[RMDB]
RNA sequence: GGGAACGACUCGAGUAGAGUCGAAAAUCUACAAGGCUUAAAAGCUUGUUGUUACGUGGGUGUGCAAACUGUUGAAGAUCUGCGUGCUCGCAUGACAUAUGUAUGCCAGUGUGGUGGUGAACGUCAUAUCAAUUGCAAUGUUCGCAUUGCAAUUGAUAAAAGAAACAACAACAACAAC
Reactivity to 2A3 in 0.01 (KOAc 150mM, MgCl2 10mM, bicine 150mM(pH8.5), 24C), signal-to-noise 2, nucleotides 027 to 126: u010c020u000a040c060a040a050g040g010c010u120u300a040a100a070a010g010c000u060u070g050u060u020g000u000u040a010c030g000u010g000g000g010u050g030u010g000c010a000a100a000c000u020g100u180u160g100a110a070g030a140u000c000u050g010c020g020u010g020c020u020c010g000c000a000u050g010a000c000a020u080a020u130g070u040a020u130g010c020c020a020g050u040g040u030g100g000u020g010g030u020g070a070a010c010g000u020c030a010u010
Reactivity to DMS in 0.01 (KOAc 150mM, MgCl2 10mM, bicine 150mM(pH8.5), 24C), signal-to-noise 3, nucleotides 027 to 126: u000c010u000a050c090a160a090g020g000c000u000u020a120a100a150a190g010c010u000u010g010u000u000g010u000u000a020c090g030u000g010g010g020u010g010u000g000c020a020a030a100c050u000g000u010u020g000a110a040g010a110u000c090u000g020c020g010u000g000c020u000c010g030c000a080u000g010a010c010a040u000a070u000g000u000a070u020g010c020c030a050g010u000g000u000g010g030u000g010g010u000g000a050a040c090g010u000c120a140u010
Source information: This 177-nucleotide RNA was probed chemically with 2A3 and DMS. It was measured as part of the RMDB library 15KREP. For DMS the reverse transcriptase was MarathonRT. The RNA was probed in 150 mM KOAc, 10 mM MgCl2 and 150 mM bicine (pH 8.5) at 24 C.